[RMDB]
RNA sequence: GGGAACGACUCGAGUAGAGUCGAAAAGCGUACUACUAAUCCGAAAGAAGAGCAACAGCCGUCGGUCAGUCCCAAAUAGGACUACGACGGACAUGCUCUUCUAGUAGCUGAUUAGUAUCGCAAAAGUCCUCCAGUUUGUUCGCAAACUGGAGGACAACUUCAACGUAACCUUCGGGUUACGUUGAAGAAAAGAAACAACAACAACAAC
Reactivity to 2A3 in 0.01 (KOAc 150mM, MgCl2 10mM, bicine 150mM(pH8.5), 24C), signal-to-noise 2, nucleotides 027 to 156: g000c000g030u120a070c050u000a000c000u000a030a010u000c030c000g000a060a020a010g000a000a000g020a000g000c000a010a030c010a150g060c030c000g010u020c020g000g120u210c090a000g020u010c010c060c010a120a260a100u300a090g000g000a010c000u030a020c030g010a010c010g000g010a000c000a010u000g000c000u020c000u010u000c000u000a000g000u000a010g000c080u040g010a000u010u010a000g000u000a000u220c000g000c000a000a050a110a120g000u010c000c000u000c000c010a010g000u000u000u000g080u070u130c180g000c130a000a000a000c000u000g000g000a000g000g010a000c000a000a000